[RMDB]
RNA sequence: GGGAACGACUCGAGUAGAGUCGAAAACCCUGGCUCUUCCAGCCUCAAGCCAGCAGUAGCAGGGCAGCCUGAUAGAGUAGGGCACCCCAGGGGUGAGGGGAGACCAGGAAGGCAGACACCCCUGUCUCCUGACAGCCUCGUAACCAUGCAGGAGACACACGAUCAUUUUAUUCGUAAAAUGAUCGUGAAAAGAAACAACAACAACAAC
Reactivity to DMS in 0.01 (KOAc 150mM, MgCl2 10mM, bicine 150mM(pH8.5), 24C), signal-to-noise 1, nucleotides 027 to 156: c050c000c030u000g020g020c010u000c000u020u000c030c020a300g000c020c000u000c020a160a110g000c000c000a070g050c140a190g010u010a080g000c110a260g020g000g070c060a150g030c000c020u010g000a180u030a180g010a190g120u000a210g010g000g060c010a190c010c000c020c020a140g020g000g000g010u010g030a170g000g020g010g000a030g030a080c040c010a040g000g060a100a050g020g010c040a100g000a190c060a150c030c010c050c030u000g030u000c000u010c000c000u000g050a260c020a150g000c030c030u010c190g000u000a060a030c020c030a090u010g030c000a060g000g010a040g030a130c020a200
Reactivity to 2A3 in 0.01 (KOAc 150mM, MgCl2 10mM, bicine 150mM(pH8.5), 24C), signal-to-noise 4, nucleotides 027 to 156: c010c000c000u000g010g010c030u020c030u250u100c020c020a010g010c000c040u020c020a080a030g010c030c030a020g020c050a070g150u220a030g020c040a040g000g030g000c030a030g020c020c010u060g050a170u160a190g150a030g060u070a030g020g000g000c000a060c010c000c000c000a050g020g000g000g010u080g020a260g000g010g000g000a010g030a080c010c000a000g030g010a020a100g060g000c050a000g040a080c010a100c030c020c000c000u020g000u000c000u020c000c000u090g070a260c000a020g010c040c030u120c060g130u100a080a090c040c030a070u120g000c000a000g000g020a010g010a000c010a000

The data come from the RNA Mapping Database (RMDB), library OK3TST. Chemical mapping of a 207-nucleotide RNA with DMS and 2A3. The 2A3 profile rests on 2,745 reads. The DMS profile rests on 1,641 reads.